Structure probing data (2A3) for a 207-nucleotide construct.
The 2A3 profile rests on 714 reads.
Source: RMDB library RSTRND, as collected in RNAgym.
The reactions ran in a buffer of 150 mM KOAc, 10 mM MgCl2 and 150 mM bicine (pH 8.5), at 24 C.
[RMDB]
RNA sequence: GGGAACGACUCGAGUAGAGUCGAAAAAGCGGGUCGAGGAUGCGAGGUUGUCUCGUUAACGAUCCUCGCAAAAUAUAAGUGCCAACUUAAAGCGCACUGAUCUAAGUCUUGCUGCUUAAGCGCUUAGAUCUGUCGGUAUAGGGCUUGUCUUCGGCCCCCACAACUCCGUGUUCGCACGGAGUUGUGGAAAAGAAACAACAACAACAAC
Reactivity to 2A3 in 0.01 (KOAc 150mM, MgCl2 10mM, bicine 150mM(pH8.5), 24C), signal-to-noise 2, nucleotides 027 to 156: a020g070c040g000g020g010u030c020g050a000g010g010a010u020g030c030g000a000g020g030u100u140g120u090c010u030c070g140u110u180a050a060c000g010a120u080c020c000u010c000g060c030a020a150a060a000u130a010u030a000a030g030u010g150c010c000a020a000c060u090u090a190a110a160g100c050g030c020a010c030u010g010a000u020c010u000a000a000g020u000c160u200u220g020c000u000g000c030u090u140a140a000g000c000g000c030u000u000a000g010a000u020c010u000g040u020c000g100g000u070a080u120a160g000g000g010c050u000u050g050u030c030u010u000c020g000g000c000c000c000